RNA sequence: GGGAACGACUCGAGUAGAGUCGAAAAGUCAGCUUGUUCGCAAGCUGACAAACUGGACACACCCACACGCAGGCGAAGCCGUGUCAAAAUGGGUGUGGGUAAAAAGGACACUGUUCGCAGUGUCCAAGCGUAACAAUUGGUUCGCCAAUUGUUACGCAAAAGAAACAACAACAACAAC
Reactivity to DMS in 0.01 (KOAc 150mM, MgCl2 10mM, bicine 150mM(pH8.5), 24C), signal-to-noise 2, nucleotides 027 to 126: g020u000c000a000g010c000u000u000g010u000u000c190g010c020a010a000g000c000u000g020a010c000a000a020a130c040u000g020g000a220c050a020c020a010c010c000c000a040c040a050c300g010c030a220g000g010c130g000a060a090g030c110c020g000u000g010u010c160a050a080a160a160u000g040g000g000u000g030u000g000g000g010u000a020a090a080a060a030g000g000a030c010a030c000u000g010u000u020c160g040c000a020g000u000g000u000c000c000a000a040
Reactivity to 2A3 in 0.01 (KOAc 150mM, MgCl2 10mM, bicine 150mM(pH8.5), 24C), signal-to-noise 1, nucleotides 027 to 126: g010u020c000a010g000c000u030u030g040u060u120c140g040c130a010a000g000c000u000g000a000c000a010a000a000c000u060g180g030a000c000a020c000a000c050c010c000a000c000a000c000g110c030a050g040g090c080g160a160a030g140c090c030g090u020g060u140c030a080a070a040a060u050g020g000g000u000g000u020g000g000g000u050a010a060a000a020a030g000g010a000c000a000c010u000g030u050u050c200g000c130a010g000u000g000u000c000c010a000a010